[RMDB]
RNA sequence: GGGAACGACUCGAGUAGAGUCGAAAAGCUAGCCUGCGCACGAUCUGACUGCCGUGACGUCUAGCCUGCGUCAGAACUAGUCUCCAUCAAUCAAAACGCAGGGAUUGAUGUACGAGACUAGUACACAGUGUAUGGACUUGUUCGCAGGUCUAUACACAAAAGAAACAACAACAACAAC
Reactivity to 2A3 in 0.01 (KOAc 150mM, MgCl2 10mM, bicine 150mM(pH8.5), 24C), signal-to-noise 9, nucleotides 027 to 126: g040c030u040a010g010c000c020u030g010c030g010c010a030c040g040a070u030c020u040g090a070c030u050g020c020c010g060u040g030a070c020g030u020c030u040a020g010c000c010u030g020c010g070u060c040a020g020a050a010c000u000a000g000u000c000u000c000c000a000u000c000a000a000u000c010a000a050a080a100c100g030c080a060g040g050g000a000u000u000g000a000u000g030u070a080c090g000a000g000a000c000u000a000g000u040a010c070a000c010a030
Reactivity to DMS in 0.01 (KOAc 150mM, MgCl2 10mM, bicine 150mM(pH8.5), 24C), signal-to-noise 9, nucleotides 027 to 126: g010c040u000a050g000c070c030u000g000c040g010c060a060c050g000a060u010c050u010g010a070c040u010g010c060c030g010u010g010a060c040g000u010c020u010a100g000c020c020u000g010c050g010u010c050a100g010a090a040c010u000a000g000u000c000u000c000c010a010u000c000a000a010u000c000a060a040a090a110c140g000c140a090g010g010g000a010u000u000g000a010u000g000u050a100c190g000a010g000a010c000u000a000g010u010a040c140a110c190a120